[RMDB]
RNA sequence: GGGAACGACUCGAGUAGAGUCGAAAACUCAAGGCCUUCGGGCCUUGAGAAAAGGCAUCCUAUCUUUGCUUCGAAGCCAAACAUGAAACAUGAAAGCAGAGAAAAGUUUUGGGUUCGCCCAAAACAAGUUCACAACUAUCUUCGGAUAGUUGUGAACAAAAGAAACAACAACAACAAC
Reactivity to 2A3 in 0.01 (KOAc 150mM, MgCl2 10mM, bicine 150mM(pH8.5), 24C), signal-to-noise 2, nucleotides 027 to 126: c000u010c000a000a000g020g000c000c070u120u170c290g060g010g010c030c000u000u030g000a000g000a000a040a000a000g020g010c020a000u020c000c010u040a070u040c000u000u010u000g030c010u020u030c040g100a080a030g040c030c040a080a110a050c070a140u240g150a130a120a040c020a000u110g060a130a060a000g000c010a000g010a000g000a090a070a000a030g010u010u010u010u010g020g000g010u020u080c220g090c020c000c000a000a020a000a000c010a010a020
Reactivity to DMS in 0.01 (KOAc 150mM, MgCl2 10mM, bicine 150mM(pH8.5), 24C), signal-to-noise 2, nucleotides 027 to 126: c020u000c000a010a000g040g040c010c000u000u020c270g020g000g010c010c010u000u000g000a010g000a030a010a080a110g000g040c140a140u020c000c030u000a120u010c010u000u010u000g010c030u000u010c010g020a120a140g000c030c060a070a080a150c130a090u010g000a110a080a120c120a090u000g000a080a050a060g010c020a000g010a030g010a090a140a040a110g010u000u000u000u000g030g000g030u000u020c170g050c000c000c010a000a010a000a000c000a070a070
The record gives the reactivity of an RNA of 177 nucleotides to 2A3 and DMS.
2A3 adducts were read by reverse transcription with SuperScript II with manganese.
For DMS the reverse transcriptase was MarathonRT.
Conditions: 150 mM KOAc, 10 mM MgCl2 and 150 mM bicine (pH 8.5), 24 C.
The data come from the RNA Mapping Database (RMDB), library M2PK50.
For 2A3, 2,314 sequencing reads were counted.
Reactivities are given for positions 27 through 126.